[RMDB]
An RNA of 177 nucleotides, treated with DMS and 2A3 and read out base by base.

RNA sequence: GGGAACGACUCGAGUAGAGUCGAAAAGCUGCGUGUCGUAGAGAAACAUCUGCCCUGAUGGUGACCUGAUGUGAGCAGCAGUUUCACAGAGUAAGCCACCCCUGUGCACGAGGUCUGGAAAGGUAAGAAUACACAGUACGUUCGCGUACUGUGUAUUAAAAGAAACAACAACAACAAC
Reactivity to DMS in 0.01 (KOAc 150mM, MgCl2 10mM, bicine 150mM(pH8.5), 24C), signal-to-noise 9, nucleotides 027 to 126: g010c030u000g000c050g020u000g020u000c050g020u010a090g010a120g010a110a090a100c050a060u000c030u000g010c040c030c020u000g010a090u010g010g000u000g000a100c250c030u010g010a080u000g020u010g010a080g010c020a110g020c110a080g010u000u010u000c020a060c040a060g000a080g010u000a070a120g010c040c040a090c050c020c040c020u010g000u010g010c080a060c070g000a070g010g010u000c030u010g010g010a050a050a060g000g010u000a070a110g000
Reactivity to 2A3 in 0.01 (KOAc 150mM, MgCl2 10mM, bicine 150mM(pH8.5), 24C), signal-to-noise 5, nucleotides 027 to 126: g030c020u030g010c020g050u060g040u060c060g080u100a030g030a000g020a140a110a030c010a080u000c020u030g020c010c010c000u060g040a110u090g020g060u060g050a110c010c020u050g060a110u040g100u020g030a040g000c010a010g020c040a010g030u050u080u020c030a050c000a000g060a010g060u070a080a000g020c000c020a030c010c010c000c000u030g040u050g040c010a020c080g030a040g000g050u030c040u050g030g050a080a030a020g070g020u070a010a040g080
Values cover nucleotides 27 to 126.